[RMDB]
RNA sequence: GGGAACGACUCGAGUAGAGUCGAAAAAAGUCCCCGGACCAUGGGCAGAGAGUGCCGCGUGCACACGCGCGUAGGCUUCCCCCGCAAGUCACUGUUAGCCCGCCAAGAAGCGACCCCUCCGGGGCGAAAGAGUUAGAUCAUUCGUGAUCUAACUCUUAAAAGAAACAACAACAACAAC
Reactivity to 2A3 in 0.01 (KOAc 150mM, MgCl2 10mM, bicine 150mM(pH8.5), 24C), signal-to-noise 1, nucleotides 027 to 126: a000a020g210u080c010c000c000c000g010g010a030c040c020a150u090g020g020g000c070a010g060a020g010a010g110u090g040c020c000g020c030g030u060g000c020a060c010a030c210g000c000g000c010g040u040a150g000g020c000u020u020c000c000c020c000c010g010c030a050a040g020u070c020a010c050u010g030u060u030a020g010c000c000c000g000c020c000a070a040g050a060a010g060c020g050a130c010c010c000c000u030c010c050g000g000g000g000c020g010a030
Reactivity to DMS in 0.01 (KOAc 150mM, MgCl2 10mM, bicine 150mM(pH8.5), 24C), signal-to-noise 6, nucleotides 027 to 126: a040a050g020u020c000c000c000c010g000g000a050c100c060a080u030g010g010g000c040a160g000a110g000a050g010u010g010c030c020g000c040g010u000g000c040a120c250a120c260g000c030g000c020g010u010a080g020g010c050u020u000c010c010c010c020c020g000c100a100a070g000u000c030a030c050u020g000u020u010a160g000c020c000c000g000c100c080a070a110g000a110a100g010c050g000a080c020c010c020c040u010c020c020g000g000g000g020c020g000a060